[RMDB]
RNA sequence: GGGAACGACUCGAGUAGAGUCGAAAAGUAAGAUGAUUCGUCAUCUUACGAAGCCGAUGAAGCGGCACAUACCGAGCUUCAUACAUCUAAGAGUGCAAAUAAUGGCGCGUGGUUUCGACCACGCGAAGUUCUCCUUAGGGUUCGCCCUAAGGAGAACAAAAGAAACAACAACAACAAC
Reactivity to DMS in 0.01 (KOAc 150mM, MgCl2 10mM, bicine 150mM(pH8.5), 24C), signal-to-noise 2, nucleotides 027 to 126: g000u000a000a000g000a010u020g000a030u000u010c190g000u000c010a010u000c000u000u000a000c010g010a160a130g020c020c030g020a020u000g010a030a040g030c010g010g020c030a060c110a050u000a200c050c090g010a090g000c010u000u010c020a040u000a090c140a090u030c110u010a110a100g000a050g010u000g000c060a050a060a100u010a050a140u000g020g020c000g010c010g000u000g010g010u000u000u010c140g000a030c010c000a030c000g010c000g030a010a070
Reactivity to 2A3 in 0.01 (KOAc 150mM, MgCl2 10mM, bicine 150mM(pH8.5), 24C), signal-to-noise 2, nucleotides 027 to 126: g000u010a000a000g000a000u010g010a000u040u110c140g040u030c060a000u000c000u000u010a000c010g000a030a000g080c000c010g000a030u040g010a010a010g000c010g010g130c050a020c030a080u270a070c000c070g050a020g020c010u000u020c000a020u040a100c050a040u080c050u130a110a060g110a030g080u070g050c050a080a050a090u200a120a120u270g180g050c000g020c000g010u000g020g010u010u050u090c190g050a010c000c010a000c000g000c010g000a000a010